[RMDB]
An RNA of 207 nucleotides, treated with 2A3 and DMS and read out base by base. It was measured as part of the RMDB library OK3TST.
RNA sequence: GGGAACGACUCGAGUAGAGUCGAAAAGAAUACAAUCCAUCACCUAAUGGCAAUAGGCUAUGGACCAUUACUGCAACAUUUGAACAGACAUAUCAGCCGCCUGAGUCGAUACAGCCGCAGCCACUUUAUCUUGAUGGCUCUGUAUACUUGGAUGGAACGACAAAACAGUUUUCGAACUGUUUUGUCGAAAAGAAACAACAACAACAAC
Reactivity to 2A3 in 0.01 (KOAc 150mM, MgCl2 10mM, bicine 150mM(pH8.5), 24C), signal-to-noise 6, nucleotides 027 to 156: g060a040a030u110a040c060a010a080u030c010c000a010u020c020a020c010c020u070a100a060u070g080g020c050a050a130u020a120g000g000c020u020a020u070g010g010a020c030c050a060u090u140a090c030u040g080c040a070a060c020a180u120u170u150g050a080a040c010a040g140a010c010a040u160a050u110c050a050g040c020c020g020c020c010u020g010a020g020u020c040g020a010u020a070c040a010g050c040c060g090c080a010g000c030c000a030c010u060u150u090a190u150c090u090u110g010a110u010g030g000c000u000c000u010g030u010a020u020a060c030u020u040g030g010a020u030g010g020a080a070
Reactivity to DMS in 0.01 (KOAc 150mM, MgCl2 10mM, bicine 150mM(pH8.5), 24C), signal-to-noise 3, nucleotides 027 to 156: g020a160a100u000a050c050a040a120u000c010c000a080u000c050a030c050c020u000a050a080u000g010g020c060a140a170u000a060g030g010c030u000a080u000g020g020a050c020c030a110u000u010a080c060u000g020c040a070a130c100a110u000u000u000g010a120a160c060a080g010a120c040a150u000a100u000c030a120g000c020c020g010c050c030u000g020a080g020u000c060g000a170u000a020c060a030g010c120c050g020c130a160g020c060c010a010c040u000u000u010a070u030c080u000u000g000a040u000g010g000c030u000c030u000g040u000a030u000a050c030u000u010g010g010a090u000g000g010a080a140